[RMDB]
RNA sequence: GGGAACGACUCGAGUAGAGUCGAAAAGGAUGCUCGUUCGCGAGCAUCCACUGAGAUAGCCACUAUAAAGAUUUAGUCUUCCUACUCGAGACAGGAUGUCUAUGCUCCUGGCCUUCGGGCCAGGAAAAGAGAUCUUCCAUUUCGAUGGAAGAUCUCUAAAAGAAACAACAACAACAAC
Reactivity to DMS in 0.01 (KOAc 150mM, MgCl2 10mM, bicine 150mM(pH8.5), 24C), signal-to-noise 1, nucleotides 027 to 126: g000g040a010u000g010c010u020c000g020u000u040c170g030c000g000a000g000c000a020u000c020c000a080c050u000g010a150g000a090u030a130g000c150c180a100c200u000a050u000a110a060a120g000a120u000u000u000a070g000u000c040u020u000c090c000u000a000c020u000c010g010a010g020a070c080a170g050g020a050u000g010u000c030u000a170u020g000c240u000c010c000u020g000g020c010c000u050u050c220g010g010g010c000c000a000g000g010a030a000a070
Reactivity to 2A3 in 0.01 (KOAc 150mM, MgCl2 10mM, bicine 150mM(pH8.5), 24C), signal-to-noise 1, nucleotides 027 to 126: g000g010a010u000g000c000u000c000g000u050u030c210g040c020g090a000g010c000a000u000c000c010a010c020u030g030a010g000a000u050a030g070c120c010a060c080u080a100u100a270a260a040g090a110u140u110u220a070g070u000c000u060u030c000c000u000a050c000u000c000g010a030g050a090c060a020g120g000a100u060g070u100c020u050a120u150g120c020u000c000c010u000g010g000c000c020u010u080c280g000g040g000c000c000a010g000g020a000a000a000
Structure probing data (DMS and 2A3) for a 177-nucleotide construct. 2A3 adducts were read by reverse transcription with SuperScript II with manganese. For DMS, 636 sequencing reads were counted.